[RMDB]
RNA sequence: GGGAACGACUCGAGUAGAGUCGAAAACCGCAUGCCCAGGUGGCCGCGAUCUUCAAGGCUACGGCGCGGAUAGGUCCACGCUGAUCGUUUUCCUCCAACGACGCUAUGGCGUCUUUCCUUCACCCGCAAAAUCGUCUCCCGUUCGCGGGAGACGAAAUCUAUGGCUUAAGUUCGCUUAAGCCAUAGAAAAAGAAACAACAACAACAAC
Reactivity to DMS in 0.01 (KOAc 150mM, MgCl2 10mM, bicine 150mM(pH8.5), 24C), signal-to-noise 2, nucleotides 027 to 156: c010c010g000c080a060u000g020c030c040c000a270g010g020u000g010g000c000c110g060c090g010a010u000c050u010u000c030a050a300g050g010c000u000a000c040g010g030c040g050c040g020g000a300u000a110g010g040u000c030c000a040c050g010c000u000g000a040u000c030g000u030u020u000u020c010c010u000c070c050a060a090c030g010a020c050g040c030u000a150u000g060g100c020g020u000c010u010u000u000c030c030u000u010c030a160c040c000c050g000c110a080a090a080a170u000c010g000u000c020u000c000c000c000g050u000u000c250g060c050g000g020g010a030g000a020c010g010a010a040a050
Reactivity to 2A3 in 0.01 (KOAc 150mM, MgCl2 10mM, bicine 150mM(pH8.5), 24C), signal-to-noise 3, nucleotides 027 to 156: c020c010g020c090a080u140g030c010c000c040a040g130g010u020g030g000c010c000g060c040g050a070u070c050u170u100c080a080a030g020g000c010u010a010c000g010g000c050g000c010g000g020a030u110a090g050g060u050c010c020a020c030g020c060u060g000a130u050c040g040u030u030u120u090c010c030u010c030c020a060a050c040g020a010c000g020c050u100a080u300g120g000c020g010u000c000u060u050u020c020c000u060u100c050a080c030c000c000g070c050a040a050a020a220u030c000g000u000c000u000c000c000c000g020u050u030c160g010c010g060g000g000a000g000a000c000g000a000a000a000
This 207-nucleotide RNA was probed chemically with DMS and 2A3.
High 2A3 reactivity points to a flexible backbone, as in loops and unpaired stretches.
For 2A3 the reverse transcriptase was SuperScript II with manganese.
DMS adducts were read by reverse transcription with MarathonRT.
The reactions ran in a buffer of 150 mM KOAc, 10 mM MgCl2 and 150 mM bicine (pH 8.5), at 24 C.